[RMDB]
RNA sequence: GGGAACGACUCGAGUAGAGUCGAAAACAAGUUGGCUUCGGCCAACUUGAAAAGAAUGGUAGUCUGAGACCGCUAAACUCAGAUAACCAAAAAUAGCGGAAAAAAGAUCAGUGUUCGCACUGAUCAAUCGAACACAUAACUUCGGUUAUGUGUUCGAAAAAGAAACAACAACAACAAC
Reactivity to DMS in 0.01 (KOAc 150mM, MgCl2 10mM, bicine 150mM(pH8.5), 24C), signal-to-noise 1, nucleotides 027 to 126: c010a000a030g030u000u000g010g000c030u000u040c170g100g000c000c000a000a000c000u000u000g000a040a050a060a120g000a150a110u000g020g000u030a230g010u000c000u010g000a020g030a160c030c010g010c060u000a150a100a110c020u000c020a030g000a050u030a130a130c020c010a020a020a050a050a040u000a130g040c030g000g020a000a110a070a000a070a050g020a020u000c000a000g000u010g000u020u010c130g000c040a010c000u010g020a020u000c000a020a030
Reactivity to 2A3 in 0.01 (KOAc 150mM, MgCl2 10mM, bicine 150mM(pH8.5), 24C), signal-to-noise 1, nucleotides 027 to 126: c000a000a020g000u000u000g020g010c040u040u100c300g020g050c010c000a000a000c000u000u020g000a020a040a000a000g160a040a040u140g010g040u040a090g070u000c000u000g020a020g030a140c020c030g000c050u070a170a070a000c010u010c000a000g000a010u020a020a030c030c000a000a060a090a000a060u060a030g000c060g070g000a090a000a030a000a000a020g000a010u000c010a000g010u010g060u060u100c150g050c030a000c020u000g000a010u000c000a010a020
Background:
Structure probing data (DMS and 2A3) for a 177-nucleotide construct. It was measured as part of the RMDB library M2PK50. Conditions: 150 mM KOAc, 10 mM MgCl2 and 150 mM bicine (pH 8.5), 24 C. In probing experiments dimethyl sulfate is read out at A N1 and C N3, which are open when not base-paired.